[RMDB]
RNA sequence: GGGAACGACUCGAGUAGAGUCGAAAAGCUGCCUCUGACGUCCUUCUCCCCCGGAAACGGGGCCGAAGGGUGGUAACGCGGGUCGCCUGGCGCUAGCACGGGUAUGCGUGGCGGUCGACCCUGGCCGCGUCCAUAUCGCUUUCGAGCGAUAUGGACGAAAAGAAACAACAACAACAAC
Reactivity to DMS in 0.01 (KOAc 150mM, MgCl2 10mM, bicine 150mM(pH8.5), 24C), signal-to-noise 2, nucleotides 027 to 126: g020c020u000g010c000c050u000c100u000g030a090c060g010u000c000c010u000u000c000u010c300c000c000c030c020g000g010a050a040a160c000g000g000g000g000c040c060g010a010a030g000g010g000u010g010g000u010a060a300c060g000c090g020g020g010u010c080g020c070c000u000g010g000c020g030c060u010a140g000c060a070c120g020g010g000u010a090u000g010c020g000u010g010g020c030g020g020u010c010g020a070c030c020c000u010g000g020c020c040g000
Reactivity to 2A3 in 0.01 (KOAc 150mM, MgCl2 10mM, bicine 150mM(pH8.5), 24C), signal-to-noise 2, nucleotides 027 to 126: g000c010u040g000c000c020u090c120u100g060a050c010g070u030c000c010u000u000c010u060c010c020c000c000c000g020g000a000a040a010c010g000g000g010g020c010c020g010a000a000g010g010g010u010g070g030u040a040a010c170g000c050g030g000g010u030c020g000c020c030u070g070g070c000g010c040u080a080g050c070a040c150g140g100g040u140a040u210g010c030g000u010g110g100c020g000g050u100c040g000a030c000c000c000u010g010g020c010c000g040